An RNA of 177 nucleotides, treated with 2A3 and DMS and read out base by base. The RNA was probed in 150 mM KOAc, 10 mM MgCl2 and 150 mM bicine (pH 8.5) at 24 C. It was measured as part of the RMDB library OK2TRN. Values cover nucleotides 27 to 126.
RNA sequence: GGGAACGACUCGAGUAGAGUCGAAAAGCAUGAAGCAGACAUGCCAAAAGUGCUACGAAUACAGUAGCACAUCUGCAGAAAGCGGCAAAUUUAAUUUAACGGAAAGGGAAGCCGCACCCACCGAUAACCAUGUACGAUCGUUCGCGAUCGUACAUGGAAAAGAAACAACAACAACAAC
Reactivity to 2A3 in 0.01 (KOAc 150mM, MgCl2 10mM, bicine 150mM(pH8.5), 24C), signal-to-noise 1, nucleotides 027 to 126: g010c010a010u000g010a120a020g000c000a020g000a010c000a000u040g030c000c030a000a210a030a010g000u010g040c000u000a000c010g080a130a090u280a230c110a090g020u000a010g000c000a000c000a000u000c000u000g000c000a020g170a020a070a000g000c010g010g000c000a000a060a170u120u150u130a140a130u100u100u190a190a070c020g000g050a100a100a150g110g000g000a100a000g010c010c010g000c020a020c010c010c000a000c010c010g010a040u040a100a040
Reactivity to DMS in 0.01 (KOAc 150mM, MgCl2 10mM, bicine 150mM(pH8.5), 24C), signal-to-noise 1, nucleotides 027 to 126: g000c000a000u010g010a220a120g020c060a000g000a060c000a010u000g000c000c160a050a080a050a020g070u000g000c000u000a000c000g000a270a170u000a070c150a180g010u000a000g000c000a000c020a060u000c000u000g030c030a230g000a050a050a080g000c050g010g020c010a010a070a120u000u000u000a100a140u000u000u000a100a150c020g000g020a030a140a030g000g000g000a190a060g000c000c000g000c020a250c000c000c010a020c020c000g000a110u010a050a190